[RMDB]
RNA sequence: GGGAACGACUCGAGUAGAGUCGAAAAGUUGAGAGCGUUUAACUUAAGUCUUUUUCAUUAGCUUAAAAAAACUAUAUACAAGUGGUGGUAGUCCGCCACUCUAAGGGGACGCCUUUAGAAGAAGAGGGAAAGGCACUAAGCUUCGGCUUAGUGCCAACCCUGCCAUAAGGUUCGCCUUAUGGCAGGGAAAAGAAACAACAACAACAAC
Reactivity to 2A3 in 0.01 (KOAc 150mM, MgCl2 10mM, bicine 150mM(pH8.5), 24C), signal-to-noise 1, nucleotides 027 to 156: g000u000u040g010a020g000a020g230c010g010u060u070u120a070a060c060u190u050a060a020g070u110c060u040u230u060u030u020c030a040u110u180a050g040c050u010u050a000a000a000a000a080a000a040c200u200a190u040a080u050a300c050a070a130g000u020g000g010u000g000g020u050a100g100u080c000c010g010c050c000a000c000u000c000u000a000a020g000g000g000g000a000c050g150c000c040u030u050u050a020g000a060a000g000a020a000g070a060g010g010g010a030a090a160g020g000c000a000c010u000a000a000g000c000u000u020c210g010g000c000u000u020a000g000u000g000c000c000a000a010
The record gives the reactivity of an RNA of 207 nucleotides to 2A3. Conditions: 150 mM KOAc, 10 mM MgCl2 and 150 mM bicine (pH 8.5), 24 C.